[RMDB]
RNA sequence: GGGAACGACUCGAGUAGAGUCGAAAAACGGGCAGUGGCGAUGGCAACGCGGCAGCCGCAGGGUCGACUUCUUCGCAGCCGCAACAGACGGGGCACGGGCAAAGAGGGGUUCUCGUUCUGUUGGAAGCCGUAUGGUGAGUUUCGACUCACCAUACGGAAAAGAAACAACAACAACAAC
Reactivity to 2A3 in 0.01 (KOAc 150mM, MgCl2 10mM, bicine 150mM(pH8.5), 24C), signal-to-noise 4, nucleotides 027 to 126: a000c020g000g030g000c020a070g040u060g100g010c020g090a100u050g040g000c040a050a010c050g010c000g030g030c000a010g020c030c010g020c030a050g020g030g010u040c030g020a040c000u080u020c000u050u050c070g010c030a020g030c010c010g010c020a030a030c020a030g050a010c010g020g000g000g010c040a030c070g030g040g020c030a060a090a030g090a040g000g040g010g000u080u060c010u000c000g020u100u030c020u020g000u010u010g010g020a070a010g060
Reactivity to DMS in 0.01 (KOAc 150mM, MgCl2 10mM, bicine 150mM(pH8.5), 24C), signal-to-noise 2, nucleotides 027 to 126: a140c080g000g000g030c040a090g030u020g030g030c030g000a060u010g000g000c000a050a070c190g040c020g020g000c030a130g040c070c060g030c010a080g010g000g070u000c080g000a070c090u010u010c050u030u000c040g020c030a090g020c000c030g000c000a060a040c060a020g000a070c070g000g000g000g000c020a090c050g030g020g060c110a080a120a100g000a150g000g000g030g020u000u010c010u000c030g000u000u020c050u020g000u000u000g000g000a090a090g040

Source information:
The record gives the reactivity of an RNA of 177 nucleotides to 2A3 and DMS. The 2A3 profile rests on 3,393 reads. 2A3 adducts were read by reverse transcription with SuperScript II with manganese. It was measured as part of the RMDB library OK1LIB.